[RMDB]
RNA sequence: GGGAACGACUCGAGUAGAGUCGAAAAGAGGACCCCUUCGACGAACAGAAGGAUCUGGUACCGGGGAGGAAUAGCCCAUAGUACAAGGGGAGAUGCUAGGAGUCAGGGGAAGCCAGAACGACUGAGAGACCUACGGUCUUCGGACCGUAGAAAAGAAACAACAACAACAAC
Reactivity to DMS in 0.01 (KOAc 150mM, MgCl2 10mM, bicine 150mM(pH8.5), 24C), signal-to-noise 9, nucleotides 027 to 129: g020a030g040g030a100c080c030c020c010u010u020c040g000a130c100g030a080a070c120a060g030a060a070g030g020a080u000c050u030g050g050u050a080c040c030g020g010g010g010a040g000g000a050a020u050a160g000c000c000c090a040u050a090g060u080a040c150a110a060g000g000g030g020a040g020a050u000g010c070u060a070g000g020a070g010u010c030a070g000g000g000g000a070a070g020c000c020a050g020a060a090c100g000a030c060u060g000a100g000a080g020a090c240
Reactivity to 2A3 in 0.01 (KOAc 150mM, MgCl2 10mM, bicine 150mM(pH8.5), 24C), signal-to-noise 9, nucleotides 027 to 129: g060a010g010g020a070c020c000c020c000u050u090c040g100a100c050g070a130a030c030a080g050a050a020g040g010a050u040c060u110g040g030u040a060c020c030g000g010g010g000a040g000g000a030a030u040a060g020c010c000c010a060u110a040g080u080a050c060a110a060g010g000g010g000a020g010a030u090g030c030u030a020g030g030a030g050u040c040a030g000g000g000g030a020a000g020c020c010a020g020a040a020c070g050a020c020u070g000a010g000a000g010a080c010